[RMDB]
RNA sequence: GGGAACGACUCGAGUAGAGUCGAAAAGAUAUGGAUCCGUUUCUCAACAGCUAGUCCAUCGGAAACGAUGGCUAGACAUGAGGGACGGAUCCUAAGUCAAACAAAUCGCGGUUCGCCGCGAUUUGAACUCUAGUAUACACUUCGGUGUAUACUAGAGAAAAGAAACAACAACAACAAC
Reactivity to DMS in 0.01 (KOAc 150mM, MgCl2 10mM, bicine 150mM(pH8.5), 24C), signal-to-noise 4, nucleotides 027 to 126: g010a010u000a040u010g000g000a010u000c000c000g000u000u000u000c000u000c010a120a070c250a170g000c010u010a010g010u020c010c010a010u000c000g020g000a000a010a020c000g020a010u000g000g000c000u000a000g000a010c110a140u020g010a010g000g000g000a000c000g000g000a000u000c000c000u000a000a050g000u000c000a160a150a300c010a010a010a010u000c000g020c000g020g010u010u020c280g020c000c000g020c000g000a000u000u000u000g000a090a170
Reactivity to 2A3 in 0.01 (KOAc 150mM, MgCl2 10mM, bicine 150mM(pH8.5), 24C), signal-to-noise 3, nucleotides 027 to 126: g010a000u020a000u040g000g000a000u000c000c000g020u010u020u000c070u010c080a300a300c140a120g010c000u020a000g080u210c020c010a000u010c010g000g000a020a000a000c000g000a010u000g000g000c000u000a000g010a000c030a260u300g000a000g000g000g010a000c000g010g000a000u000c000c000u000a000a000g000u000c000a000a070a000c000a000a020a000u010c000g000c020g030g120u070u140c300g010c170c000g010c030g000a000u010u000u010g000a010a010
The record gives the reactivity of an RNA of 177 nucleotides to DMS and 2A3. For DMS the reverse transcriptase was MarathonRT. The RNA was probed in 150 mM KOAc, 10 mM MgCl2 and 150 mM bicine (pH 8.5) at 24 C. The DMS profile rests on 7,684 reads.